Record summary
Chemical mapping of a 207-nucleotide RNA with DMS and 2A3. Values cover nucleotides 27 to 156. For 2A3, 3,731 sequencing reads were counted.
[RMDB]
RNA sequence: GGGAACGACUCGAGUAGAGUCGAAAAACAUUGGUUCGUCAAUACGAUUCAUUGCAAGAGUAUGUAAAUGUUGAGAACGUAACUACUCUUACUGGUUCACGUGUUUAUGAAAAAUGGACUGAUAUUACAGGUCUUGCUAAUAUUGAUGAUGAAGCAGGCUUCGAUUAAGUUUCGACUUAAUCGAAGCAAAAGAAACAACAACAACAAC
Reactivity to DMS in 0.01 (KOAc 150mM, MgCl2 10mM, bicine 150mM(pH8.5), 24C), signal-to-noise 2, nucleotides 027 to 156: a170c090a120u020u020g000g040u010u000c020g050u020c030a030a020u000a030c000g000a300u010u000c140a120u000u010g020c010a040a050g030a110g020u010a080u000g000u020a030a070a100u000g020u020u010g010a150g020a090a190c140g010u000a080a070c050u000a060c020u020c010u000u000a050c030u000g010g000u010u000c010a060c000g000u000g020u000u000u000a110u020g010a050a100a080a090a060u000g000g030a020c020u010g010a060u000a070u000u000a030c030a030g000g010u010c020u000u000g020c000u010a150a040u000a000u010u000g030a100u000g000a040u000g010a090a100g050c080a150g030
Reactivity to 2A3 in 0.01 (KOAc 150mM, MgCl2 10mM, bicine 150mM(pH8.5), 24C), signal-to-noise 6, nucleotides 027 to 156: a000c070a080u090u090g130g010u100u020c000g000u010c010a040a030u090a150c030g070a050u050u160c030a050u080u150g000c010a010a000g010a020g050u100a090u170g000u030a070a090a070u140g030u070u100g070a070g050a090a030c060g010u040a030a020c040u060a040c020u060c010u090u080a070c080u110g030g020u040u020c070a030c080g040u070g070u060u180u060a080u090g130a080a070a050a000a020u050g000g020a010c030u020g030a070u040a050u170u020a010c020a040g060g050u020c000u000u020g000c010u050a070a070u040a080u110u060g050a050u020g000a020u030g040a030a010g080c060a010g140